[RMDB]
RNA sequence: GGGAACGACUCGAGUAGAGUCGAAAAAAGUUUAUGCGUCAAGGCUAGAAUACAUCUCUGGUGAUCGAAAGGUCUCACUCUGGUCAAAAGGGUCUUGCACAGGGAACUGUCCAUCUAAAUGUGGAUGUAAUAGAAAAACUUGUCAAACACAAGAAUAGUCGUGAAAAUAUUUCGAUAUUUUCACGACAAAAGAAACAACAACAACAAC
Reactivity to DMS in 0.01 (KOAc 150mM, MgCl2 10mM, bicine 150mM(pH8.5), 24C), signal-to-noise 1, nucleotides 027 to 156: a060a040g000u000u010u000a100u010g010c030g020u000c030a150a040g010g050c000u020a050g050a090a070u030a150c170a050u000c000u000c040u020g030g010u010g020a030u000c010g030a150a170a180g030g070u000c030u020c030a060c020u000c040u000g030g000u000c060a080a160a190a210g030g000g000u000c020u000u000g030c070a050c000a090g010g000g000a030a070c050u000g030u030c010c010a000u000c090u000a020a150a190u000g020u000g000g030a030u000g000u020a040a090u000a090g000a050a060a050a050a090c020u000u000g000u000c040a060a060a110c100a080c000a000a120g010a110a130u000a180
Reactivity to 2A3 in 0.01 (KOAc 150mM, MgCl2 10mM, bicine 150mM(pH8.5), 24C), signal-to-noise 3, nucleotides 027 to 156: a000a000g060u100u080u030a120u090g030c020g020u030c010a010a010g030g000c000u050a010g050a040a010u090a090c060a070u030c050u000c020u080g050g020u030g040a050u080c050g080a040a020a050g000g020u030c000u000c020a040c000u020c020u030g030g030u060c010a050a020a050a060g050g000g030u010c050u040u080g000c000a000c020a060g050g000g020a040a020c050u050g020u020c000c000a020u000c070u130a080a160a130u100g000u060g010g020a010u050g020u100a140a060u080a160g150a070a090a010a010a010c020u050u040g020u030c040a050a080a060c140a030c000a030a010g300a040a040u300a090